About this RNA:
Structure probing data (DMS) for a 177-nucleotide construct. For DMS the reverse transcriptase was MarathonRT. DMS (dimethyl sulfate) methylates the pairing face of unpaired adenines and cytosines.
RNA sequence: GGGAACGACUCGAGUAGAGUCGAAAACGGACGGGAUUUUAGCCCGGUUGCAUGUUUACCCAUUUCGUGCUGGGUCCUGGACCCAAUUAAGAUAAUAGAAAUAUUAUCGAUUUCUUUACCGUCCGGAGAUAGGAGCUAGGUUCGCCUAGCUCCUAUCAAAAGAAACAACAACAACAAC
Reactivity to DMS in 0.01 (KOAc 150mM, MgCl2 10mM, bicine 150mM(pH8.5), 24C), signal-to-noise 2, nucleotides 027 to 126: c040g000g000a030c020g020g010g000a150u010u000u020u000a120g010c030c020c010g030g040u020u010g010c070a030u010g000u000u000u000a110c050c020c060a180u010u010u020c040g030u000g010c050u000g020g030g010u020c040c140u010g030g000a080c010c010c010a030a040u010u010a100a220g000a010u010a000a010u000a000g010a170a090a170u000a000u000u000a000u000c000g000a170u000u000u000c040u010u000u000a170c020c010g010u000c000c010g000g000a120